Chemical mapping of a 177-nucleotide RNA with DMS and 2A3. The reactions ran in a buffer of 150 mM KOAc, 10 mM MgCl2 and 150 mM bicine (pH 8.5), at 24 C. For 2A3 the reverse transcriptase was SuperScript II with manganese. For 2A3, 1,650 sequencing reads were counted. DMS adducts were read by reverse transcription with MarathonRT.
RNA sequence: GGGAACGACUCGAGUAGAGUCGAAAAUCAUCCUAUCUUACUCAGUGCAAGAUGGACAAAAGUUUGGGAUGGCGCGUGGUUGAAGGUGCUUGUACUCCCGCGGAAUCAUGGUGUGUUUCAGCGCCUAAGCAGUUACUAGUUUCGACUAGUAACUGCUAAAAGAAACAACAACAACAAC
Reactivity to DMS in 0.01 (KOAc 150mM, MgCl2 10mM, bicine 150mM(pH8.5), 24C), signal-to-noise 3, nucleotides 027 to 126: u010c150a120u000c010c010u010a040u000c030u010u010a070c070u000c140a100g010u000g030c080a040a060g000a060u000g010g030a050c120a050a130a090a050g000u000u010u000g010g000g010a050u000g000g010c060g020c060g030u000g000g010u010u010g000a090a060g000g030u000g000c040u010u000g030u000a090c150u000c000c020c010g020c130g010g000a100a060u000c100a030u010g000g020u000g000u000g010u000u010u000c060a190g020c050g020c010c020u000a080
Reactivity to 2A3 in 0.01 (KOAc 150mM, MgCl2 10mM, bicine 150mM(pH8.5), 24C), signal-to-noise 2, nucleotides 027 to 126: u070c020a020u000c010c000u040a030u040c020u040u050a090c030u010c090a070g040u040g180c030a090a040g050a210u070g000g020a030c040a030a180a050a020g110u070u110u100g030g030g010a020u030g010g050c000g000c010g060u140g030g060u020u100g080a050a020g000g000u030g040c000u050u080g020u030a090c030u000c020c030c020g080c080g040g090a040a060u110c100a060u080g000g010u030g000u020g000u060u040u000c040a070g050c030g010c040c000u030a080